[RMDB]
RNA sequence: GGGAACGACUCGAGUAGAGUCGAAAAAUCUAAAUUUAGUCAUUAAGAAACAUCAGGCACACCCUAGAUGAGGGAUGUUCUAUUGAAAAGGAUGUUCUGUUACACAGGAUUCUUUUACCUGUGUAAAUUGGUAAAAGACAAAGAAAGAUGGUAGAGAUAUGAGUGAAAAUUUCGAUUUUCACUCAUAAAAAGAAACAACAACAACAAC
Reactivity to DMS in 0.01 (KOAc 150mM, MgCl2 10mM, bicine 150mM(pH8.5), 24C), signal-to-noise 3, nucleotides 027 to 156: a100u000c010u000a040a060a190u000u000u000a100g020u010c050a080u000u020a140a130g010a130a040a050c030a040u000c020a080g000g030c020a040c060a080c130c090c080u010a150g020a110u000g010a050g010g000g010a030u000g020u010u000c030u000a130u000u000g000a100a120a110a180g000g010a050u000g020u010u000c050u010g020u000u000a050c020a030c000a060g000g010a060u000u000c090u010u010u010u000a070c010c000u000g000u020g000u000a020a030a080u000u020g020g040u000a040a040a040a100g000a090c060a040a070a150g010a100a070a110g000a060u000g010g020u000a110g010a130g010a230
Reactivity to 2A3 in 0.01 (KOAc 150mM, MgCl2 10mM, bicine 150mM(pH8.5), 24C), signal-to-noise 2, nucleotides 027 to 156: a000u080c060u050a100a070a070u060u080u140a090g020u000c020a020u090u220a150a040g050a050a020a010c020a010u050c050a000g000g070c030a020c010a020c010c010c010u060a070g030a240u120g120a100g030g000g010a010u030g020u000u070c040u030a160u160u170g100a100a010a030a030g040g010a010u010g000u020u030c020u030g030u010u010a000c010a000c000a000g000g060a080u130u100c040u110u180u080u130a100c000c000u010g020u000g010u000a000a000a010u050u050g000g010u030a060a060a050a030g010a000c020a020a090a000g100a070a050a000g050a000u030g000g100u070a040g030a010g000a100

Structure probing data (DMS and 2A3) for a 207-nucleotide construct. The reactions ran in a buffer of 150 mM KOAc, 10 mM MgCl2 and 150 mM bicine (pH 8.5), at 24 C. Values are in units of 0.01, from 0 to 300, in steps of 10.